Structure probing data (DMS and 2A3) for a 177-nucleotide construct. For DMS the reverse transcriptase was MarathonRT. The RNA was probed in 150 mM KOAc, 10 mM MgCl2 and 150 mM bicine (pH 8.5) at 24 C. The data come from the RNA Mapping Database (RMDB), library M2PK50. Values are in units of 0.01, from 0 to 300, in steps of 10. For 2A3 the reverse transcriptase was SuperScript II with manganese.
RNA sequence: GGGAACGACUCGAGUAGAGUCGAAAAAGUCUACUUUUCGAAGUAGACUGUGCUCCCACUUGAUCGAGGUCUCACCGUGUCAUUGCCCACGACUCUCGGGCGUAAUAGAUUGGUUCGCCAAUCUAAACAAUACUCCUGUGUUCGCACAGGAGUAUUGAAAAGAAACAACAACAACAAC
Reactivity to DMS in 0.01 (KOAc 150mM, MgCl2 10mM, bicine 150mM(pH8.5), 24C), signal-to-noise 8, nucleotides 027 to 126: a010g010u000c000u000a000c000u000u000u000u010c150g010a010a000g010u000a000g010a010c000u000g000u010g020c190u000c000c000c010a140c170u010u000g010a060u000c050g000a070g010g010u000c040u000c070a100c080c040g010u000g000u000c050a130u000u000g010c030c020c020a130c100g010a060c060u000c040u000c060g000g000g010c040g000u000a060a110u010a010g000a020u000u000g000g010u000u010c250g010c000c000a010a000u000c000u000a020a090a190
Reactivity to 2A3 in 0.01 (KOAc 150mM, MgCl2 10mM, bicine 150mM(pH8.5), 24C), signal-to-noise 5, nucleotides 027 to 126: a010g000u000c000u000a010c010u050u040u050u160c220g080a010a000g000u000a000g000a000c000u000g020u050g020c040u030c000c030c000a030c050u050u190g060a110u060c050g060a030g030g070u010c020u020c060a060c010c040g060u030g040u070c050a100u000u220g020c000c000c000a040c030g070a060c050u050c010u030c080g020g000g000c000g020u050a100a090u010a070g010a000u000u020g020g030u040u030c170g040c050c000a000a000u000c000u000a040a030a020